Description
Conditions: 150 mM KOAc, 10 mM MgCl2 and 150 mM bicine (pH 8.5), 24 C. This 207-nucleotide RNA was probed chemically with DMS and 2A3. 2A3 adducts were read by reverse transcription with SuperScript II with manganese. As a SHAPE reagent, 2A3 marks flexible, mostly unpaired nucleotides at the ribose 2'-OH. The data come from the RNA Mapping Database (RMDB), library OK3TST. The 2A3 profile rests on 6,330 reads.
RNA sequence: GGGAACGACUCGAGUAGAGUCGAAAAGAUGUCAAUAGGUAAGCCUAUAUCUGUUGGCACUACAGGUACUAUGUCGCAUCAUGGUGCUUGUGAACUCGAAGCUUGAUGCGACAAGUUUUGAGUGAUCUAAGAGUCUAUAGGCUUAGAUUUUUAGAGACGAGACCUGAAUGUUCGCAUUCAGGUUUCGAAAAGAAACAACAACAACAAC
Reactivity to DMS in 0.01 (KOAc 150mM, MgCl2 10mM, bicine 150mM(pH8.5), 24C), signal-to-noise 4, nucleotides 027 to 156: g000a100u000g000u000c010a030a030u000a030g020g020u000a020a080g020c030c030u000a070u000a030u010c000u000g000u000u000g000g010c030a040c030u000a100c040a060g020g020u000a040c040u010a050u000g010u000c070g000c100a070u010c010a080u000g030g000u000g020c030u000u010g030u000g010a090a090c040u000c030g000a060a070g020c040u010u010g000a080u000g020c120g020a100c040a020a020g020u000u000u000u000g000a100g020u000g010a120u000c010u000a020a010g000a020g010u000c020u000a030u010a040g010g030c030u000u000a010g000a030u010u000u000u010u000a030g000a080g010a280
Reactivity to 2A3 in 0.01 (KOAc 150mM, MgCl2 10mM, bicine 150mM(pH8.5), 24C), signal-to-noise 3, nucleotides 027 to 156: g050a030u020g000u010c000a010a010u010a020g040g000u010a010a000g010c010c010u010a010u000a010u020c000u000g030u000u000g010g010c000a000c000u080a050c000a030g020g060u060a020c020u060a060u070g010u000c020g000c000a010u010c000a000u070g130g020u090g040c010u010u040g020u030g080a070a030c040u010c060g080a020a000g020c010u040u030g010a010u020g020c000g000a000c010a010a020g000u010u010u020u060g050a040g020u050g040a030u000c000u020a010a000g010a000g010u000c000u010a010u000a010g000g000c000u000u000a000g000a010u000u010u010u000u010a010g000a000g000a020